Annotation:
The record gives the reactivity of an RNA of 177 nucleotides to 2A3 and DMS. Reactivities are given for positions 27 through 126. Source: RMDB library OK2TST, as collected in RNAgym.
RNA sequence: GGGAACGACUCGAGUAGAGUCGAAAAUUCGGGUAUGGGGUUCAGGUCGCUAUUCCUUUCUCGAUGCCCCUGGUGUGUCCAUGGGAUGAGCUGACUGGCCCACCUAGUGGGAGCCUGUGCACCACGGCUAUAUCUGCCGUUUCGACGGCAGAUAUAGAAAAGAAACAACAACAACAAC
Reactivity to 2A3 in 0.01 (KOAc 150mM, MgCl2 10mM, bicine 150mM(pH8.5), 24C), signal-to-noise 3, nucleotides 027 to 126: u060u010c060g000g050g010u110a080u140g050g020g030g050u050u130c050a050g000g100u060c030g020c060u050a050u080u090c000c000u110u140u080c110u040c060g050a070u100g050c010c020c010c040u040g060g030u050g030u030g020u090c030c050a100u100g030g000g040a060u060g070a020g020c080u060g120a060c020u040g050g020c000c000c000a010c000c020u010a050g010u010g010g040g010a050g060c010c060u050g040u050g010c010a030c100c010a020c050g030g000
Reactivity to DMS in 0.01 (KOAc 150mM, MgCl2 10mM, bicine 150mM(pH8.5), 24C), signal-to-noise 3, nucleotides 027 to 126: u010u000c090g000g000g000u000a040u000g010g010g020g020u000u000c070a100g000g010u000c080g010c060u020a090u010u000c020c010u010u000u010c060u000c090g020a080u000g010c040c010c040c090u000g010g010u000g020u010g000u000c010c070a050u010g000g000g020a080u000g000a070g010c030u000g040a060c130u000g000g010c010c020c000a040c030c070u000a090g020u010g010g000g010a100g020c020c030u000g010u010g000c060a110c020c020a100c210g010g010